[RMDB]
RNA sequence: GGGAACGACUCGAGUAGAGUCGAAAAUGGAAGGAGGAGAAGGGUAGGAUGGUUUGACUUUGAGAUGGCUAGAUACGCUGCUAGAAUUAACGGUGCCACAAUGCUCGCUGUUACAAUGCUGGAUAAGCAACACGUACAGGUUCGCCUGUACGUGUUGAAAAGAAACAACAACAACAAC
Reactivity to 2A3 in 0.01 (KOAc 150mM, MgCl2 10mM, bicine 150mM(pH8.5), 24C), signal-to-noise 3, nucleotides 027 to 126: u070g030g020a030a050g020g050a030g010g050a080g010a060a110g040g000g010u100a040g060g030a030u050g100g000u040u050u090g050a070c020u050u050u100g030a110g000a060u060g030g000c020u010a040g020a100u100a070c060g000c030u030g010c010u030a020g040a130a090u100u040a070a030c060g030g010u030g040c020c030a050c030a040a060u080g020c010u020c020g000c010u000g020u040u010a040c060a050a080u090g030c010u030g060g030a080u060a130a030g030
Reactivity to DMS in 0.01 (KOAc 150mM, MgCl2 10mM, bicine 150mM(pH8.5), 24C), signal-to-noise 4, nucleotides 027 to 126: u000g010g030a080a060g010g010a080g000g000a100g010a070a080g000g000g000u000a070g010g010a060u000g000g000u000u000u000g020a110c080u010u000u010g000a100g020a070u000g010g010c030u000a070g010a100u010a080c140g000c050u000g000c050u000a050g020a090a080u000u010a060a100c090g000g010u000g020c080c060a060c120a070a050u010g000c060u000c060g000c060u010g010u000u000a050c210a040a080u010g010c030u000g000g000a100u000a080a060g010